[RMDB]
RNA sequence: GGGAACGACUCGAGUAGAGUCGAAAAAGACAAGGAAGCAGCGUGAGGCCCUGCUUAGGAAGCCGCGGGGUCACGGCUACCGCUGAGGAGCCGACAAGCGCUUCUUCUGCCAGCAGGGACGAGGCGGUAGCCCUGCACCUUUCGAGGUGCAGGGCUAAAAAGAAACAACAACAACAAC
Reactivity to 2A3 in 0.01 (KOAc 150mM, MgCl2 10mM, bicine 150mM(pH8.5), 24C), signal-to-noise 2, nucleotides 027 to 126: a000g140a030c090a040a020g130g010a040a080g030c060a000g030c030g010u060g020a170g040g000c020c000c000u020g000c000u130u110a070g060g020a080a050g070c050c010g030c000g000g010g020g030u010c010a000c090g010g000c020u250a300c040c000g020c050u110g050a030g000g020a000g000c000c010g000a030c020a000a050g030c000g000c030u010u000c000u000u000c000u030g070c010c010a070g050c040a010g000g080g000a010c020g020a070g020g010c000g030g000
Reactivity to DMS in 0.01 (KOAc 150mM, MgCl2 10mM, bicine 150mM(pH8.5), 24C), signal-to-noise 2, nucleotides 027 to 126: a090g000a080c140a130a110g040g010a000a030g000c100a070g040c000g010u040g020a180g000g010c020c000c030u000g000c000u020u010a240g010g000a080a050g060c130c110g000c000g000g000g000g010u020c090a080c000g000g020c000u000a120c020c000g010c200u050g020a210g020g020a060g000c000c000g000a150c070a130a270g010c020g010c010u000u010c000u000u000c030u000g010c090c160a040g050c050a000g000g020g000a070c050g000a110g010g000c020g000g000
Chemical mapping of a 177-nucleotide RNA with 2A3 and DMS. For DMS, 2,620 sequencing reads were counted.